[RMDB]
RNA sequence: GGGAACGACUCGAGUAGAGUCGAAAACAUAGACUUCAGUUAACUCUACGAAGUAAACUGGAUUUAUCUCUUCAAUAUUAGCCUACCAGAAAGAGAUAUCUGUUAGAAAAGCAUCAUUCUGGGUCUCCGCUGAGUCCAUCUUCGGAUGGACUCAGCGAAAAGAAACAACAACAACAAC
Reactivity to 2A3 in 0.01 (KOAc 150mM, MgCl2 10mM, bicine 150mM(pH8.5), 24C), signal-to-noise 1, nucleotides 027 to 126: c040a000u150a130g030a060c140u000u000c000a050g160u150u030a000a000c010u040c010u200a150c130g130a270a060g010u000a000a000a080c000u000g000g000a000u060u000u060a060u060c000u000c000u150u000c090a300a180u090a200u300u050a190g000c040c050u000a040c010c010a000g030a030a010a010g130a010g000a000u030a000u040c040u000g280u050u010a150g010a090a100a000a050g030c010a040u000c000a000u000u090c030u000g010g020g020u000c080u000c000